[RMDB]
RNA sequence: GGGAACGACUCGAGUAGAGUCGAAAAGCUAUACCGUUCGCGGUAUAGCAAAAUCUUUCCGAGAUGUUCUAAUACGAGCCUAUUAGUCAACGGUUCGAGUCCAAACGGGUUACUUCGGUAACCCGAACCGUACCAAUUACUUCGGUAAUUGGUACGGAAAAGAAACAACAACAACAAC
Reactivity to 2A3 in 0.01 (KOAc 150mM, MgCl2 10mM, bicine 150mM(pH8.5), 24C), signal-to-noise 1, nucleotides 027 to 126: g000c000u010a000u000a010c070c010g050u040u080c290g040c030g150g030u010a000u010a010g000c000a000a000a000a000u010c010u030u030u030c010c000g030a030g040a050u140g020u070u020c020u080a080a050u030a170c030g010a030g080c000c000u080a090u160u150a130g150u110c050a060a050c090g010g000u010u010c010g020a030g020u070c020c050a050a040a040c000g000g000g000u010u000a000c010u020u090c170g030g000u000a000a020c000c000c000g000a000a000
Reactivity to DMS in 0.01 (KOAc 150mM, MgCl2 10mM, bicine 150mM(pH8.5), 24C), signal-to-noise 1, nucleotides 027 to 126: g010c000u000a000u000a010c010c010g010u000u010c220g040c000g010g000u000a000u000a000g000c000a010a010a060a070u010c090u000u000u000c020c010g020a130g020a050u000g000u000u020c010u010a070a040u010a090c030g010a060g020c020c010u010a060u030u000a120g000u000c190a070a130c190g000g000u010u010c010g020a150g010u000c070c060a040a160a180c030g010g030g010u000u000a010c020u000u030c160g000g010u000a010a040c000c000c020g010a010a030
An RNA of 177 nucleotides, treated with 2A3 and DMS and read out base by base. Values cover nucleotides 27 to 126. For 2A3, 1,215 sequencing reads were counted. For 2A3 the reverse transcriptase was SuperScript II with manganese. The RNA was probed in 150 mM KOAc, 10 mM MgCl2 and 150 mM bicine (pH 8.5) at 24 C. Source: RMDB library M2PK50, as collected in RNAgym.